Structure probing data (2A3) for a 177-nucleotide construct.
[RMDB]
RNA sequence: GGGAACGACUCGAGUAGAGUCGAAAACGUCAGUGAGUGUCGGCCCAAUUUCGUCCGACCUUGUACUCGCUCGCGAGAGGGACGCGGAAGCCGAGCUUGAUACCCGUUUGCUUGGCGCACUCAACGACACUCCUGCCCCGUUCGCGGGGCAGGAGUGAAAAGAAACAACAACAACAAC
Reactivity to 2A3 in 0.01 (KOAc 150mM, MgCl2 10mM, bicine 150mM(pH8.5), 24C), signal-to-noise 2, nucleotides 027 to 126: c010g060u040c070a040g010u000g080a020g000u050g050u050c010g030g010c000c010c010a050a030u090u140u090c040g080u030c000c050g070a150c090c040u030u150g080u260a050c000u000c010g020c020u060c160g080c000g000a080g040a000g060g000g000a030c000g000c020g070g000a080a110g000c000c000g000a000g000c010u020u270g030a050u300a130c000c000c060g070u090u080u140g000c010u000u030g000g000c010g030c000a020c000u000c020a000a080c020g010a040